RNA sequence: GGGAACGACUCGAGUAGAGUCGAAAAGAUAUGGAUACACGAUGAGCCAUUCACAUCGACGAACUACUUAAACUCUCGGAAACGAGAGCACUAAGCGUCGAUGUGAAUGGCGAGUGUAUCCUAAGUCCCUUAAAAGUGACUUCGGUCACUUUUAAGGAAAAGAAACAACAACAACAAC
Reactivity to 2A3 in 0.01 (KOAc 150mM, MgCl2 10mM, bicine 150mM(pH8.5), 24C), signal-to-noise 2, nucleotides 027 to 126: g040a020u110a010u290g030g010a000u000a030c030a000c020g290a300u300g200a020g000c040c020a010u030u000c000a010c010a010u030c000g040a000c010g010a050a060c080u300a020c010u300u030a120a120a080c000u010c000u040c040g000g030a000a130a010c010g010a010g000a000g010c110a030c050u030a000a020g030c000g020u000c000g020a000u000g000u000g000a010a000u010g000g000c000g000a000g000u000g000u000a020u010c000c010u000a000a010g010u000c010
Reactivity to DMS in 0.01 (KOAc 150mM, MgCl2 10mM, bicine 150mM(pH8.5), 24C), signal-to-noise 4, nucleotides 027 to 126: g000a090u000a300u000g020g000a010u010a000c000a000c000g000a190u010g030a300g000c000c010a010u000u000c000a000c000a010u000c000g000a010c000g010a090a070c080u020a300c020u000u000a020a100a200c000u000c000u000c000g000g000a120a110a220c010g010a010g000a010g020c080a080c210u000a010a020g000c000g010u000c000g000a010u010g010u000g010a000a000u000g000g000c000g000a010g010u000g020u000a000u000c010c000u000a020a110g010u000c040

Record summary:
An RNA of 177 nucleotides, treated with 2A3 and DMS and read out base by base. For 2A3, 2,944 sequencing reads were counted. For DMS, 5,258 sequencing reads were counted. DMS adducts were read by reverse transcription with MarathonRT. Conditions: 150 mM KOAc, 10 mM MgCl2 and 150 mM bicine (pH 8.5), 24 C. High DMS reactivity at an A or C suggests that its Watson-Crick edge is free.